[RMDB]
RNA sequence: GGGAACGACUCGAGUAGAGUCGAAAAGUACUCAGAAAUGAGUAGAAAUAAAAGGCGAACACACACGACGCCGAAACCUCACAAUAGUGUGUGGAAUAAUGAUCGAAAGAUCAGGUGAGGAAAGAAAGGGUACUUUCAUGUUCGCAUGAAAGUACCCAAAAGAAACAACAACAACAAC
Reactivity to 2A3 in 0.01 (KOAc 150mM, MgCl2 10mM, bicine 150mM(pH8.5), 24C), signal-to-noise 2, nucleotides 027 to 126: g050u010a000c000u000c000a010g030a000a180a090u070g030a000g000u000a000g160a010a130a010u160a000a030a000a000g000g000c020g000a050a020c020a000c000a000c000a000c000g110a040c000g080c010c010g050a120a040a040c000c010u020c000a020c000a130a160u040a140g010u000g020u040g000u040g040g000a000a000u190a010a030u110g000a000u000c000g040a120a040a010g020a000u000c020a000g010g000u000g020a070g060g080a070a010a070g120a050a090a000
Reactivity to DMS in 0.01 (KOAc 150mM, MgCl2 10mM, bicine 150mM(pH8.5), 24C), signal-to-noise 1, nucleotides 027 to 126: g010u000a030c020u000c000a000g000a300a100a120u000g000a000g000u000a050g000a020a090a080u080a080a080a030a190g000g030c000g020a290a130c020a020c000a000c000a000c000g020a260c070g060c090c010g030a120a100a000c000c000u000c050a050c000a090a030u060a050g000u040g000u000g090u000g010g000a080a020u060a130a140u000g000a020u000c020g000a170a150a130g000a000u000c040a040g000g030u000g000a000g010g020a280a050a010g000a100a050a110

The record gives the reactivity of an RNA of 177 nucleotides to 2A3 and DMS. The reactions ran in a buffer of 150 mM KOAc, 10 mM MgCl2 and 150 mM bicine (pH 8.5), at 24 C. Reactivities are rounded to 0.1 and cut off at 0 and 3. For 2A3, 1,016 sequencing reads were counted. DMS adducts were read by reverse transcription with MarathonRT.